Record summary: Structure probing data (2A3) for a 177-nucleotide construct. Values cover nucleotides 27 to 126. For 2A3 the reverse transcriptase was SuperScript II with manganese. The 2A3 profile rests on 626 reads. Reactivities are rounded to 0.1 and cut off at 0 and 3. The reactions ran in a buffer of 150 mM KOAc, 10 mM MgCl2 and 150 mM bicine (pH 8.5), at 24 C.
RNA sequence: GGGAACGACUCGAGUAGAGUCGAAAAGAGGCUGUUUAUGUCCAUGGAUUUAUUCAGGUGUCUAUCAGGUUCAUUCGUGUUCCUGAUAGACAGGUCAUGCAGAUCGAUGAUCAUGCUUGGCAGCCGAGGGUACGCAACACUUCGGUGUUGCGUACCCAAAAGAAACAACAACAACAAC
Reactivity to 2A3 in 0.01 (KOAc 150mM, MgCl2 10mM, bicine 150mM(pH8.5), 24C), signal-to-noise 1, nucleotides 027 to 126: g290a090g000g000c080u070g120u100u040u070a200u110g000u030c060c000a030u060g180g100a170u000u030u100a090u030u300c110a070g140g000u020g000u000c000u000a000u000c000a010g000g020u010u000c000a000u030u020c110g040u020g000u000u000c000c000u000g000a000u000a000g000a000c000a000g020g000u000c040a020u090g150c100a060g060a060u000c040g070a000u060g020a000u070c000a020u090g000c010u000u060g000g000c020a000g000c020c000g010a170